Chemical mapping of a 177-nucleotide RNA with 2A3.
[RMDB]
RNA sequence: GGGAACGACUCGAGUAGAGUCGAAAAACAGUGAGAGGAAGGAAUGAUGUGCUAAAAAUUCCCAAGAAAAGGACUCUGAUUGAAUCUGCUUCACUCUGAUUGAACUAUGGUUAUUUCUGACCUUCCUGACUGGUACUCACUUCGGUGAGUACCAGUCAAAAGAAACAACAACAACAAC
Reactivity to 2A3 in 0.01 (KOAc 150mM, MgCl2 10mM, bicine 150mM(pH8.5), 24C), signal-to-noise 2, nucleotides 027 to 126: a000c050a020g090u110g080a140g030a000g060g010a000a000g060g020a100a000u040g030a120u040g090u140g030c030u040a000a110a000a000a110u030u000c050c010c010a020a000g070a000a060a060a000g040g000a020c000u010c030u060g000a200u060u040g020a020a040u010c010u050g040c120u020u000c030a040c070u000c040u020g130a110u030u040g060a100a040c060u040a230u100g010g060u110u050a110u040u190u080c060u040g050a040c000c000u000u000c000c000u000

Reactivities are rounded to 0.1 and cut off at 0 and 3. The 2A3 profile rests on 863 reads.